RNA sequence: GGGAACGACUCGAGUAGAGUCGAAAAGGGUGAUGUCUCCUAACCUUUAUCAAUGGGGGAACUCGGUCGUGCUGUGGGUAGAAAUUUUAUUUCGUGCCUACCUUAGACGCUUGUCGUCGGGAGUAUGUGGGACUGAUGAACUUCGGUUCAUCAGUAAUCAGUCUAUUUUCUUCGGAAAAUAGACUGAAAAAGAAACAACAACAACAAC
Reactivity to 2A3 in 0.01 (KOAc 150mM, MgCl2 10mM, bicine 150mM(pH8.5), 24C), signal-to-noise 5, nucleotides 027 to 156: g030g010g010u050g020a080u100g050u030c020u020c040c000u040a100a090c010c010u090u130u140a290u160c130a150a130u130g000g010g010g000g010a000a000c010u000c030g020g000u010c020g050u030g030c050u060g020u040g000g000g000u020a030g100a020a050a010u150u230u170u140a150u060u080u100c050g050u110g000c000c010u010a030c000c010u050u040a040g010a010c020g020c080u170u300g100u270c010g000u010c000g000g020g000a060g040u080a080u130g050u130g030g030g010a010c000u000g000a000u000g000a000a000c010u030u060c210g050g000u010u000c000a000u000c000a000g010u000a000a040
Reactivity to DMS in 0.01 (KOAc 150mM, MgCl2 10mM, bicine 150mM(pH8.5), 24C), signal-to-noise 3, nucleotides 027 to 156: g000g000g040u010g010a100u000g010u000c020u010c010c020u000a160a150c030c030u000u010u000a140u020c080a080a140u000g020g010g020g010g020a070a080c050u000c030g000g000u000c050g000u000g010c040u000g040u000g030g020g010u010a280g010a030a020a090u000u000u010u010a080u010u030u000c040g010u010g020c010c000u000a040c010c110u000u000a090g020a070c020g010c060u000u000g030u000c000g030u000c020g010g010g020a120g010u000a060u000g000u010g010g010g000a080c010u010g010a020u000g010a000a010c010u000u010c300g030g010u000u000c000a010u000c000a010g010u000a030a210